[RMDB]
RNA sequence: GGGAACGACUCGAGUAGAGUCGAAAAACGCGUCAGCUACGGCCGACGCGAAGAUUUGCAUAUAGUGUAGUAUGCAACUAAAAAUAAAGAAAUACACGUCAAGAACAGUCCGGUACGCCGGACUGAAAAAAGGACUCUUUCUUCGGAAAGAGUCCAACACCGUGUAAAGGUUCGCCUUUACACGGUGAAAAGAAACAACAACAACAAC
Reactivity to 2A3 in 0.01 (KOAc 150mM, MgCl2 10mM, bicine 150mM(pH8.5), 24C), signal-to-noise 1, nucleotides 027 to 156: a000c030g000c000g020u000c000a000g010c000u000a020c050g070g000c020c020g000a000c000g000c000g000a000a000g010a040u010u000u030g000c000a000u000a000u000a080g000u000g000u000a010g000u000a000u000g010c000a020a020c040u230a070a020a090a060a080u100a020a130a060g160a040a130a000u000a000c020a000c030g120u120c130a130a030g020a150a060c010a000g000u000c000c010g000g000u050a070c290g020c040c000g000g030a000c000u000g000a000a000a000a000a000a000g000g000a000c010u000c000u020u000u000c000u060u060c120g000g000a000a000a000g000a000g000u000c000c000a020a000
This 207-nucleotide RNA was probed chemically with 2A3. The data come from the RNA Mapping Database (RMDB), library M2RFPK. The reactions ran in a buffer of 150 mM KOAc, 10 mM MgCl2 and 150 mM bicine (pH 8.5), at 24 C. Reactivities are given for positions 27 through 156.